[RMDB]
RNA sequence: GGGAACGACUCGAGUAGAGUCGAAAAGAUAUGGAUUAACGGGAGGUAACCAUUUCGAGGAUCGGAUCUGAUCGGAAACGAUCAGAUCCGGGAGAAAUAAUUUACCGAAGAACGUUAAUCCUAAGUCGCUAUAUUUUACGUUCGCGUAAAAUAUAGCAAAAGAAACAACAACAACAAC
Reactivity to DMS in 0.01 (KOAc 150mM, MgCl2 10mM, bicine 150mM(pH8.5), 24C), signal-to-noise 2, nucleotides 027 to 126: g000a030u000a300u020g010g000a020u000u000a000a020c010g020g000g010a130g000g030u010a000a040c300c140a040u010u000u000c000g000a070g040g000a050u020c010g000g000a050u010c000u000g020a000u020c000g000g000a090a130a180c010g010a020u000c000a000g030a010u000c000c010g020g020g010a050g000a010a020a010u000a180a120u010u000u000a010c000c010g000a100a170g020a130a120c010g000u010u000a030a040u000c000c000u010a010a120g010u000c080
Reactivity to 2A3 in 0.01 (KOAc 150mM, MgCl2 10mM, bicine 150mM(pH8.5), 24C), signal-to-noise 1, nucleotides 027 to 126: g050a000u160a060u170g000g000a000u040u000a010a030c040g030g040g010a110g000g000u000a040a000c160c010a020u020u000u030c150g040a300g090g010a040u060c020g000g000a010u000c000u020g000a000u030c000g020g040a030a110a050c030g000a000u000c030a020g000a000u010c010c000g020g000g010a020g000a010a000a010u080a010a070u120u020u030a000c000c020g120a110a020g060a070a000c000g000u000u000a000a010u030c000c000u010a060a020g080u060c070